[RMDB]
An RNA of 177 nucleotides, treated with 2A3 and DMS and read out base by base. The reactions ran in a buffer of 150 mM KOAc, 10 mM MgCl2 and 150 mM bicine (pH 8.5), at 24 C. For DMS the reverse transcriptase was MarathonRT. Values cover nucleotides 27 to 126. For 2A3 the reverse transcriptase was SuperScript II with manganese.
RNA sequence: GGGAACGACUCGAGUAGAGUCGAAAAUCAUCGUUCUUCGGAACGAUGAAGUAUAACGCGGGGUCCGGACACAGGCGUAGCUGGCCUGGGAUAGUCACAGUAUGGGGCAAACUUUCGAGUUUGCCAAAGAAGGAGAACAAUUCGUUGUUCUCCUUCUAAAAGAAACAACAACAACAAC
Reactivity to 2A3 in 0.01 (KOAc 150mM, MgCl2 10mM, bicine 150mM(pH8.5), 24C), signal-to-noise 4, nucleotides 027 to 126: u010c000a000u000c000g020u010u000c010u020u030c240g090g000a000a000c000g000a000u000g000a000a000g000u040a100u040a160a040c060g010c030g040g000g010g000u020c020c010g030g000a010c030a000c010a060g050g010c030g040u060a050g040c050u060g040g010c000c000u020g010g000g030a110u110a070g040u060c030a000c020a090g070u120a110u210g170g000g000g000c000a000a000a000c010u070u080u090c170g020a010g010u010u020u010g000c000c000a020a010
Reactivity to DMS in 0.01 (KOAc 150mM, MgCl2 10mM, bicine 150mM(pH8.5), 24C), signal-to-noise 9, nucleotides 027 to 126: u000c000a010u000c000g010u000u000c000u000u020c180g020g010a010a000c000g010a000u000g010a010a070g010u000a090u010a070a100c110g010c060g000g000g000g000u010c030c030g010g010a080c080a100c080a030g010g010c030g020u000a080g010c080u000g000g010c020c020u000g000g010g010a080u000a060g010u000c050a060c100a090g010u000a090u010g020g000g000g010c000a000a010a010c000u000u000u010c190g010a020g010u000u000u000g010c000c000a010a030